RNA sequence: GGGAACGACUCGAGUAGAGUCGAAAAGCAGAAACUGAUCGUAAGGCAGUGUUCUUUGCCCCGAUGCAUAUGACAGAUUUGCUAGGUAUGGAUAUCUGGCGACUUGAAGUGCUGCGUCCGCAACCAACCCCUGAUAGUGGUUCGCCACUAUCAGGGGAAAAGAAACAACAACAACAAC
Reactivity to DMS in 0.01 (KOAc 150mM, MgCl2 10mM, bicine 150mM(pH8.5), 24C), signal-to-noise 2, nucleotides 027 to 126: g000c070a040g000a020a070a070c020u000g000a070u000c040g010u010a110a210g000g020c010a030g010u000g030u000u000c010u000u000u000g040c050c010c020c140g020a060u020g010c030a060u010a030u000g010a260c170a090g030a010u000u000u020g030c010u000a020g000g010u000a040u010g000g000a210u000a030u000c030u000g000g000c000g000a020c060u000u000g030a150a210g000u010g020c100u000g000c060g030u020c010c120g060c100a060a100c040c100a070a210
Reactivity to 2A3 in 0.01 (KOAc 150mM, MgCl2 10mM, bicine 150mM(pH8.5), 24C), signal-to-noise 2, nucleotides 027 to 126: g000c010a000g030a000a110a030c020u080g040a170u180c020g060u160a030a100g060g010c030a000g020u040g250u180u000c000u060u110u070g000c070c010c000c000g010a030u100g000c030a030u040a090u240g060a040c020a040g090a150u000u080u060g030c020u030a020g000g030u000a040u180g230g130a080u040a000u140c030u040g030g030c000g000a020c000u020u040g030a060a000g000u030g040c010u000g010c010g020u060c000c040g080c050a010a040c010c020a000a080
Annotation
An RNA of 177 nucleotides, treated with DMS and 2A3 and read out base by base. Conditions: 150 mM KOAc, 10 mM MgCl2 and 150 mM bicine (pH 8.5), 24 C. Source: RMDB library OK2TST, as collected in RNAgym. For DMS, 1,053 sequencing reads were counted.